[RMDB]
RNA sequence: GGGAACGACUCGAGUAGAGUCGAAAACACAGGCGACUUAAUCGGAGAGCGGUUACACGCGAGGAAGAUGAAAUUAUUACAUCAGUAGAGUCGAGAUUACUACAACUUGCGUUGCUAUCUCAAAUAAAGAAUAGUUAUCGUUCGCGAUAACUAUUCUAAAAGAAACAACAACAACAAC
Reactivity to DMS in 0.01 (KOAc 150mM, MgCl2 10mM, bicine 150mM(pH8.5), 24C), signal-to-noise 5, nucleotides 027 to 126: c100a110c170a070g000g000c060g000a070c050u000u020a080a070u010c120g000g000a090g010a080g010c080g010g000u000u010a050c160a070c030g020c020g010a030g000g010a130a120g000a030u000g000a060a080a130u010u010a100u010u000a080c010a020u000c000a130g020u000a040g000a070g020u000c070g010a080g010a080u000u000a080c030u000a010c050a120a150c020u010u000g000c050g010u000u000g010c050u000a080u010c010u000c010a050a090a100u000a050a060
Reactivity to 2A3 in 0.01 (KOAc 150mM, MgCl2 10mM, bicine 150mM(pH8.5), 24C), signal-to-noise 3, nucleotides 027 to 126: c090a000c020a010g130g030c060g020a020c050u100u130a110a040u140c040g020g000a030g000a030g090c080g070g000u080u160a090c070a000c040g020c020g000a010g030g050a070a140g000a010u040g070a050a130a020u280u240a100u100u190a050c000a020u010c020a000g020u030a010g030a040g070u130c110g050a040g020a130u140u160a090c010u010a020c000a090a030c010u020u020g030c010g040u030u090g000c010u050a050u060c010u010c030a070a120a040u260a070a190

This 177-nucleotide RNA was probed chemically with DMS and 2A3. The 2A3 profile rests on 2,377 reads. For 2A3 the reverse transcriptase was SuperScript II with manganese. Source: RMDB library M2PK90, as collected in RNAgym.